[RMDB]
RNA sequence: GGGAACGACUCGAGUAGAGUCGAAAAUGUCGAGACGUCCCCUUCGGAGAGAGUAUACGCUUUCGAUGAUGUAGGGGCAACCCCGACACCGCACAACCCCGAUGGGUCAGCGGUCUUGAGCGGGCAUAUCUUCCGGACGGUUCGCCGUCCGGAAGAUAAAAGAAACAACAACAACAAC
Reactivity to 2A3 in 0.01 (KOAc 150mM, MgCl2 10mM, bicine 150mM(pH8.5), 24C), signal-to-noise 1, nucleotides 027 to 126: u180g000u030c020g090a050g000a070c050g270u150c000c040c000c000u000u000c020g000g000a050g000a050g000a000g000u040a070u040a300c130g000c000u000u000u000c030g070a060u090g040a000u000g000u100a030g060g000g000g060c000a040a040c000c000c000c000g000a000c000a000c000c010g090c000a110c020a110a110c050c000c010c020g170a090u300g010g010g000u040c020a000g040c000g000g050u070c020u030u070g000a050g000c040g000g030g040c000a040u060